This 207-nucleotide RNA was probed chemically with 2A3. Conditions: 150 mM KOAc, 10 mM MgCl2 and 150 mM bicine (pH 8.5), 24 C. The data come from the RNA Mapping Database (RMDB), library ARCHII.
RNA sequence: GGGAACGACUCGAGUAGAGUCGAAAAAUAACUACGCUCUAGCCGCUUAAUGCCGCUAGCCAUCUACCACACGUUUCGCACAUGGGCAGUGGAUUUGAUGGUCAUCUCACAUCGUGCUAGCGAGGGAACCCUGUCCGGGGGUGAACCGCGAAACAGUUCAAUCACAAAUCUUCGGAUUUGUGAUUGAAAAAGAAACAACAACAACAAC
Reactivity to 2A3 in 0.01 (KOAc 150mM, MgCl2 10mM, bicine 150mM(pH8.5), 24C), signal-to-noise 3, nucleotides 027 to 156: a010u120a060a000c080u140a060c080g040c060u030c010u050a000g010c000c000g010c040u140u230a130a040u300g020c030c030g020c010u010a010g000c040c000a010u000c020u030a040c000c000a030c010a020c150g010u010u020u020c040g000c020a000c010a020u000g020g000g000c020a030g050u020g110g010a120u270u120u140g020a010u010g010g050u060c060a180u040c050u050c010a010c010a010u060c060g000u010g000c030u010a050g010c000g030a300g000g000g010a000a010c010c010c010u040g190u280c140c040g120g000g000g010g010u010g010a020a000c000c010g050c010g030a010a050a010c030a020g040u040